RNA sequence: GGGAACGACUCGAGUAGAGUCGAAAAGGAGAGCAGCGCACCGGCAUGGGCAGGCGGCCGGCGGCGGAGGGCGGCUGAGGGCUGCUGAGGGUACGCGCAGCGGCCUCUCGUCGCCCUGCACGUGCCAAUGAAGGCCCUGUUUCGACAGGGCCUUCAUAAAAGAAACAACAACAACAAC
Reactivity to 2A3 in 0.01 (KOAc 150mM, MgCl2 10mM, bicine 150mM(pH8.5), 24C), signal-to-noise 1, nucleotides 027 to 126: g110g010a020g020a000g020c050a010g090c040g030c020a020c000c030g070g020c060a080u040g030g000g060c020a040g000g000c000g000g000c020c000g000g000c000g020g000c020g010g030a000g000g000g000c000g000g020c130u220g000a000g020g000g020c000u000g000c000u040g000a010g070g130g100u270a050c210g050c000g010c190a000g030c010g000g040c000c000u140c000u000c040g010u050c000g000c000c000c020u010g010c010a010c000g110u150g000c000c050a010
This 177-nucleotide RNA was probed chemically with 2A3. It was measured as part of the RMDB library OK1LIB. Conditions: 150 mM KOAc, 10 mM MgCl2 and 150 mM bicine (pH 8.5), 24 C.